[RMDB]
RNA sequence: GGGAACGACUCGAGUAGAGUCGAAAAUUCAUUUAAAACAUCUGAAAUAUAUUUGGUAUGCCAAAAUAUUGAAACAUACCCUAUUCUCAGUCGAACAGCACUAGGCGAAGAAACAAGGCAACGGUUACACUCCUUAGGGAUUCGUCCCUAAGGAGUGAAAAGAAACAACAACAACAAC
Reactivity to DMS in 0.01 (KOAc 150mM, MgCl2 10mM, bicine 150mM(pH8.5), 24C), signal-to-noise 3, nucleotides 027 to 126: u010u000c040a050u040u010u030a030a090a130a180c110a010u010c050u030g000a080a100a030u010a040u010a080u000u000u020g000g000u010a050u030g040c090c000a010a060a040a070u030a080u000u010g000a120a120a180c130a020u040a050c020c000c110u010a060u000u000c020u030c010a030g010u030c020g000a030a070c130a050g000c000a050c040u000a040g000g020c000g000a080a060g000a040a050a140c140a100a050g000g000c050a000a080c040g010g020u030u030a120
Reactivity to 2A3 in 0.01 (KOAc 150mM, MgCl2 10mM, bicine 150mM(pH8.5), 24C), signal-to-noise 3, nucleotides 027 to 126: u060u010c010a000u030u110u140a160a100a040a030c050a100u080c050u020g040a020a100a000u210a000u040a130u060u060u130g000g000u050a020u060g090c040c050a020a000a060a100u170a090u030u110g040a070a020a000c020a030u110a110c000c000c020u020a050u190u000c040u020c080a050g020u040c040g080a090a060c020a060g070c000a010c070u040a000g020g040c030g000a020a010g080a070a090a020c060a040a000g020g020c030a050a000c030g120g000u110u130a070